The record gives the reactivity of an RNA of 177 nucleotides to DMS and 2A3. It was measured as part of the RMDB library OK1LIB. The DMS profile rests on 8,992 reads.

[RMDB]
RNA sequence: GGGAACGACUCGAGUAGAGUCGAAAAGAAAAAGUCGUCGAGUCCGGAGAAUAUCGAGUAGUGGAUACGAUCCGGAGAGUAUCGACUACAAGAUAUCGAGACGAAAGUCUCGAGAGACGACGAAAAAGGGUAAUAUUUGGUUCGCCAAAUAUUACCCAAAAGAAACAACAACAACAAC
Reactivity to DMS in 0.01 (KOAc 150mM, MgCl2 10mM, bicine 150mM(pH8.5), 24C), signal-to-noise 5, nucleotides 027 to 126: g000a030a090a070a090a180g000u000c010g020u000c000g000a240g000u020c030c050g000g000a050g000a180a070u000a000u000c020g000a300g000u000a020g020u020g010g020a010u000a000c010g000a140u020c060c030g000g010a020g010a120g010u010a000u000c010g000a040c020u000a020c040a030a230g000a020u000a010u010c000g010a010g000a000c000g000a100a090a180g010u000c000u010c000g000a090g020a190g030a030c000g010a000c000g000a040a040a080a110a120
Reactivity to 2A3 in 0.01 (KOAc 150mM, MgCl2 10mM, bicine 150mM(pH8.5), 24C), signal-to-noise 4, nucleotides 027 to 126: g090a000a120a010a020a010g040u010c000g000u000c010g020a040g090u050c020c030g050g010a090g030a080a030u020a000u040c010g010a010g030u030a010g010u050g130g000a010u010a010c010g030a080u040c030c050g030g010a040g000a000g030u010a010u010c060g060a010c000u010a010c000a020a000g000a000u020a010u020c000g000a000g000a000c010g050a030a030a020g000u000c010u010c010g000a010g000a000g000a010c000g000a000c000g050a030a040a010a020a020